[RMDB]
RNA sequence: GGGAACGACUCGAGUAGAGUCGAAAAUGCAGAGUCUCCUCUGCUGUGCUGAGGUGUGGACAAUGGGAAACCAUGGACGGACUGGAGUAGGCAAAUGUCAUAUUCCCUGUUACAACUGUCUGUUUGACGGACUCAGUAAUUUCGAUUACUGAGUCCGAAAAGAAACAACAACAACAAC
Reactivity to 2A3 in 0.01 (KOAc 150mM, MgCl2 10mM, bicine 150mM(pH8.5), 24C), signal-to-noise 1, nucleotides 027 to 126: u090g000c000a000g020a030g160u060c040u050c170c020u000c040u030g040c060u050g020u030g030c000u010g050a030g040g000u070g000u080g150g030a040c040a140a060u200g000g100g060a000a060a050c000c020a040u050g000g060a040c070g050g000a010c030u070g020g030a060g030u090a050g030g000c020a080a130a080u150g050u160c030a010u030a030u070u050c000c000c000u010g070u060u140a080c040a070a030c040u030g020u060c020u010g110u000u020u010g050a020
Reactivity to DMS in 0.01 (KOAc 150mM, MgCl2 10mM, bicine 150mM(pH8.5), 24C), signal-to-noise 3, nucleotides 027 to 126: u000g000c010a040g010a080g000u010c130u010c200c020u000c010u000g000c010u010g000u000g010c050u000g000a110g020g000u000g030u010g010g000a050c100a080a070u020g000g010g000a100a080a150c040c010a060u000g000g000a040c110g020g000a060c060u000g020g000a060g020u000a080g000g010c070a060a080a090u010g010u010c080a040u000a190u010u000c020c000c000u000g010u010u010a090c120a070a140c110u000g000u000c050u000g020u010u010u000g000a170